Chemical mapping of a 207-nucleotide RNA with 2A3 and DMS. Values cover nucleotides 27 to 156. The 2A3 profile rests on 2,267 reads. Values are in units of 0.01, from 0 to 300, in steps of 10. Conditions: 150 mM KOAc, 10 mM MgCl2 and 150 mM bicine (pH 8.5), 24 C.

[RMDB]
RNA sequence: GGGAACGACUCGAGUAGAGUCGAAAAGUAUCCCUAGAUGAUAAAACACCGCACAUGGCUCGUAAGAGCGGUUAAAUUAGCAAGUAAUGCAAAUUACGCGAGGAAACGCAUGGCCUAGGCUCGUUAGAAAAGGGAGAAUCCUUCGGGAUUCUCCCAACGUAUAUAAUGUCUUCGGACAUUAUAUACGAAAAGAAACAACAACAACAAC
Reactivity to 2A3 in 0.01 (KOAc 150mM, MgCl2 10mM, bicine 150mM(pH8.5), 24C), signal-to-noise 4, nucleotides 027 to 156: g030u040a080u070c000c000c000u000a060g070a150u190g020a030u160a090a080a030a020c080a020c010c040g060c020a030c020a150u070g060g000c030u030c050g030u070a110a020g030a030g060c040g000g000u030u050a020a070a090u090u090a020g020c070a130a060g070u110a160a050u060g020c030a010a080a070u140u060a040c040g000c010g050a030g000g070a050a050a010c040g020c050a030u080g020g020c000c040u020a040g050g000c020u020c050g040u050u030a050g120a060a090a030a010g010g000g000a010g000a000a000u000c000c000u010u060c150g010g000g000a010u000u000c000u010c000c000c000a000a000
Reactivity to DMS in 0.01 (KOAc 150mM, MgCl2 10mM, bicine 150mM(pH8.5), 24C), signal-to-noise 3, nucleotides 027 to 156: g020u000a100u000c000c000c000u000a110g010a140u000g010a090u000a070a120a140a140c070a150c040c000g010c020a170c060a140u000g020g010c020u000c040g010u000a120a100g020a110g030c000g000g000u000u000a060a070a130u000u020a110g030c050a050a140g020u000a030a060u000g010c100a070a090a080u000u000a040c020g000c020g000a120g010g010a050a060a080c050g030c060a040u000g010g000c060c020u010a070g020g000c040u000c080g030u000u000a100g000a090a080a090a130g000g020g040a040g010a020a030u000c010c000u000u000c300g000g010g000a010u000u000c010u000c000c010c010a000a000